[RMDB]
RNA sequence: GGGAACGACUCGAGUAGAGUCGAAAAACAAACUGAGCAAUAAAUACAAACGCAAACGAUAAUUAUUCACUAGCUGCAGCGUAAUAGCACAGCUCGUUUCUCCUAGGCUUCCCACAGUCUAGACAGAAACGUCAUCUUAGUGGGGAACGUCUUAAGGCGCAUCUCGAUUGUUCGCAAUCGAGAUGCGAAAAGAAACAACAACAACAAC
Reactivity to 2A3 in 0.01 (KOAc 150mM, MgCl2 10mM, bicine 150mM(pH8.5), 24C), signal-to-noise 2, nucleotides 027 to 156: a000c050a000a060a000c060u150g020a010g100c030a040a220u180a200a080a080u290a130c110a050a110a010c030g030c050a050a090a010c100g020a050u110a210a080u170u130a040u070u090c010a040c090u030a010g000c000u040g010c070a070g010c020g000u040a010a070u040a060g000c010a000c000a020g000c030u000c000g000u000u000u000c030u000c000c000u000a010g000g010c010u040u040c050c010c000a010c000a000g000u020c020u040a010g010a030c000a000g090a000a050a010c010g030u020c010a060u110c080u120u080a000g000u010g020g000g020g010a000a000c080g030u000c000u050u040a110a020g130g000

Source: RMDB library ARCHII, as collected in RNAgym. The record gives the reactivity of an RNA of 207 nucleotides to 2A3.